[RMDB]
RNA sequence: GGGAACGACUCGAGUAGAGUCGAAAAGAGCAUACUUCAGAUGUAUGCCAUAUCCAUAUAGGCGUUCUGAACUAAAGUAUAUGGAUAUGAGGUUCGUUAUUUAGUUCAAUGAACGAUUUGAAGUAUAGAUAGUUGACACAUUCGUGUGUUAGCUAUCAAAAGAAACAACAACAACAAC
Reactivity to DMS in 0.01 (KOAc 150mM, MgCl2 10mM, bicine 150mM(pH8.5), 24C), signal-to-noise 9, nucleotides 027 to 126: g010a150g010c090a030u000a000c000u000u000c170a070g010a090u020g000u020a040u020g000c050c010a040u010a030u010c010c000a050u010a050u010a040g010g010c080g010u000u000c060u020g010a040a030c040u010a040a050a080g000u010a020u030a000u000g000g000a010u000a040u020g010a130g010g010u000u000c000g020u010u000a000u010u010u020a060g010u010u000c060a040a000u020g000a010a010c010g010a070u010u010u010g000a050a080g010u010a040u010a120
Reactivity to 2A3 in 0.01 (KOAc 150mM, MgCl2 10mM, bicine 150mM(pH8.5), 24C), signal-to-noise 8, nucleotides 027 to 126: g070a010g020c030a000u000a010c010u050u120c050a030g010a080u080g030u050a030u070g030c010c000a000u010a010u000c000c000a000u040a000u020a030g110g000c020g020u050u000c040u040g030a030a020c010u030a050a010a010g150u020a040u010a000u030g000g000a000u010a020u070g020a040g050g040u010u010c000g000u010u020a000u010u060u040a050g040u010u020c010a000a010u060g010a010a000c000g010a020u020u000u080g040a040a010g020u030a040u010a050